[RMDB]
RNA sequence: GGGAACGACUCGAGUAGAGUCGAAAAGAACUUUGGCCGGCUCGGAAUAGAAUCAGGGGCUGCAAACUGCCCACUGGCAGAAAGGAUUAUAGCAAAUGCGUACCCUAUUGCAAUACAGCCCGGCCAACAUAGACUACUCUAUUCGUAGAGUAGUCAAGGCUAUCUACAAGUUCGCUUGUAGAUAGCCAAAAGAAACAACAACAACAAC
Reactivity to 2A3 in 0.01 (KOAc 150mM, MgCl2 10mM, bicine 150mM(pH8.5), 24C), signal-to-noise 2, nucleotides 027 to 156: g050a060a000c020u050u070u060g000g020c000c020g000g040c010u070c150g020g030a050a050u160a130g040a080a030u130c050a080g000g050g000g040c080u070g000c050a100a130a030c030u000g000c010c070c060a080c240u150g010g000c020a000g050a050a130a000g090g040a060u150u100a140u230a060g030c040a100a100a000u060g060c050g090u140a110c000c000c000u060a080u020u100g110c000a030a020u060a240c050a050g000c000c030c000g000g010c000c000a000a000c000a020u060a050g000a000c000u000a000c020u000c000u010a050u060u010c080g020u010a020g010a000g000u000a000g000u000c000a000a000